[RMDB]
RNA sequence: GGGAACGACUCGAGUAGAGUCGAAAAAGCUGUUCUUAUGUAACAGUUGUGGCAUUCCUCUGUGGGAAAGAAACUGUUAACACAGUUAAAUACCUCUUUCUUAGCAAAACAGAAAGUGGGUAUACGUUUGGAACAGGUUCUUCGGAACCUGUUCCAAAAAAGAAACAACAACAACAAC
Reactivity to DMS in 0.01 (KOAc 150mM, MgCl2 10mM, bicine 150mM(pH8.5), 24C), signal-to-noise 1, nucleotides 027 to 126: a000g010c010u010g070u000u000c010u130u030a250u020g020u030a000a000c000a000g000u000u000g000u000g060g090c270a300u000u000c000c000u030c160u030g000u030g000g050g000a090a130a050g000a170a000a020c000u000g000u000u000a050a180c070a080c000a020g000u000u000a030a070a190u000a000c000c000u000c000u000u000u030c000u000u000a040g000c300a110a060a100a140c210a070g000a020a000a000g000u020g000g020g000u000a000u000a120c190g000u000